Annotation: This 177-nucleotide RNA was probed chemically with DMS and 2A3. DMS adducts were read by reverse transcription with MarathonRT. For 2A3 the reverse transcriptase was SuperScript II with manganese.

RNA sequence: GGGAACGACUCGAGUAGAGUCGAAAAGCUCUAGGAGACUAGAGCGAUACGUUAGAGAGCUCGUGGCAUGACUAACGGAUAACCAGGUACGAGGUUGCCAGAGGACAUAGCUAUAGCUAUGUCCAAAGAGCUUUCAUACGUUCGCGUAUGAAAGCUCAAAAGAAACAACAACAACAAC
Reactivity to DMS in 0.01 (KOAc 150mM, MgCl2 10mM, bicine 150mM(pH8.5), 24C), signal-to-noise 2, nucleotides 027 to 126: g000c000u000c000u030a010g000g000a170g040a040c000u030a000g000a050g000c000g030a040u030a000c070g010u000u000a150g000a110g070a140g000c020u000c070g000u000g000g000c030a110u020g000a110c040u000a030a040c050g000g020a010u040a040a110c030c010a090g000g010u010a050c150g040a060g020g000u000u000g010c000c020a050g000a300g030g000a020c000a000u000a000g020c020u010a140u130a070g010c000u000a000u000g010u010c000c000a030a020a060
Reactivity to 2A3 in 0.01 (KOAc 150mM, MgCl2 10mM, bicine 150mM(pH8.5), 24C), signal-to-noise 1, nucleotides 027 to 126: g000c000u000c000u000a020g010g000a070g030a080c000u000a000g000a000g000c000g000a010u010a060c010g010u010u010a000g100a050g000a060g160c040u040c090g170u060g050g010c040a040u070g060a110c000u040a000a030c000g000g020a020u020a060a010c010c000a000g000g090u040a020c000g010a060g090g070u050u020g010c020c000a050g000a000g040g050a000c000a010u000a000g000c000u080a020u040a300g000c000u000a000u040g000u000c000c000a000a000a000